[RMDB]
RNA sequence: GGGAACGACUCGAGUAGAGUCGAAAAAGACUGGCGGUUACGACCGCCAGUCAAGGUGCGAGUGUCUUCGCCUCUGAGAGAGAUACUAUGAGAUCUCAAGCCUCGGAGGCGUAGAUACUCACACCAACUUACACUGAAUUUUCGAAUUCAGUGUAAGAAAAGAAACAACAACAACAAC
Reactivity to DMS in 0.01 (KOAc 150mM, MgCl2 10mM, bicine 150mM(pH8.5), 24C), signal-to-noise 6, nucleotides 027 to 126: a080g010a010c000u000g000g010c000g010g010u000u000a100c250g010a060c000c010g010c000c000a000g000u000c000a010a030g000g020u000g010c040g000a010g020u000g010u000c000u000u000c000g020c000c000u000c000u000g010a020g020a210g000a030g000a010u000a020c030u020a130u030g000a220g010a020u000c000u000c000a110a140g020c290c000u000c000g000g000a010g010g010c000g010u000a000g000a020u000a000c000u000c000a010c000a000c000c000a060a050
Reactivity to 2A3 in 0.01 (KOAc 150mM, MgCl2 10mM, bicine 150mM(pH8.5), 24C), signal-to-noise 9, nucleotides 027 to 126: a000g000a000c000u000g010g000c010g010g040u060u070a090c260g080a030c060c000g000c000c000a000g000u000c000a000a010g000g000u000g000c010g000a000g000u000g000u000c000u010u020c000g000c000c000u000c000u000g000a010g000a000g000a000g010a010u020a100c090u100a200u300g220a300g020a270u030c010u000c020a110a100g090c010c000u000c000g000g000a000g000g000c000g000u000a000g000a000u000a000c000u000c000a000c000a000c000c000a000a010
Background: Structure probing data (DMS and 2A3) for a 177-nucleotide construct. In probing experiments dimethyl sulfate is read out at A N1 and C N3, which are open when not base-paired. 2A3 adducts were read by reverse transcription with SuperScript II with manganese. It was measured as part of the RMDB libraries RFM100 and RFMREP. Conditions: 150 mM KOAc, 10 mM MgCl2 and 150 mM bicine (pH 8.5), 24 C. DMS adducts were read by reverse transcription with MarathonRT.